[RMDB]
RNA sequence: GGGAACGACUCGAGUAGAGUCGAAAACAGGAGAAAUGUGAUAAAUACAUCCAUGAAAUUGCAAGAAAGUCUCAUAUGUGUCUAGUUCGAAUCUAUCUCAUAGUGACCCUCAGUCACUGGAUGACUCUCUCUUGGUGUCGUUCGCGACACCAAGAGAAAAAGAAACAACAACAACAAC
Reactivity to DMS in 0.01 (KOAc 150mM, MgCl2 10mM, bicine 150mM(pH8.5), 24C), signal-to-noise 1, nucleotides 027 to 126: c070a110g020g000a030g010a020a110a050u010g020u000g000a080u000a020a140a230u010a070c110a020u010c040c070a050u000g020a030a040a050u000u000g000c120a040a050g010a060a090a070g010u010c060u000c000a030u010a020u000g000u000g010u000c060u000a040g040u020u000c100g010a050a020u000c010u000a080u000c050u030c060a050u000a020g000u000g010a050c010c090c070u000c150a040g000u010c020a040c060u000g040g000a160u010g000a040c050u000c100